[RMDB]
RNA sequence: GGGAACGACUCGAGUAGAGUCGAAAAGAUAUGGAGUGCGGUAGCUUUUGACGUAUCCGUCGGAAACGACGGUAAGCGAUAAGCUACCACUCCUAAGUCAAAACGGAAUCCCUUCGGGGAUUCCGAAGCAUUGAAGGAUGUUCGCAUCCUUCAAUGCAAAAGAAACAACAACAACAAC
Reactivity to DMS in 0.01 (KOAc 150mM, MgCl2 10mM, bicine 150mM(pH8.5), 24C), signal-to-noise 1, nucleotides 027 to 126: g000a050u000a240u000g000g010a020g030u000g040c250g000g020u000a020g000c000u000u010u020u000g000a190c100g000u000a050u000c000c000g030u000c000g030g010a050a070a110c010g010a020c030g000g000u000a010a140g010c000g020a110u000a040a020g030c000u020a010c010c000a020c000u000c010c010u000a000a080g000u000c020a070a090a150a200c010g000g010a020a000u000c000c000c000u000u010c200g060g000g000g010a000u000u020c000c000g010a010a030
Reactivity to 2A3 in 0.01 (KOAc 150mM, MgCl2 10mM, bicine 150mM(pH8.5), 24C), signal-to-noise 2, nucleotides 027 to 126: g030a000u040a000u060g010g000a000g000u130g120c170g140g040u030a010g000c020u130u150u240u300g280a080c000g010u000a020u050c000c000g000u000c000g000g010a000a040a010c030g010a000c020g000g070u040a100a020g040c020g130a190u070a300a020g030c010u000a000c000c000a010c000u000c020c000u010a050a010g030u000c010a070a030a070a060c030g010g020a000a020u000c000c000c000u050u060c240g070g000g000g000a010u000u000c000c000g010a010a000

An RNA of 177 nucleotides, treated with DMS and 2A3 and read out base by base. Values are in units of 0.01, from 0 to 300, in steps of 10. For 2A3, 2,927 sequencing reads were counted. The RNA was probed in 150 mM KOAc, 10 mM MgCl2 and 150 mM bicine (pH 8.5) at 24 C. The data come from the RNA Mapping Database (RMDB), library TTRDEL. 2A3 adducts were read by reverse transcription with SuperScript II with manganese. High DMS reactivity at an A or C suggests that its Watson-Crick edge is free.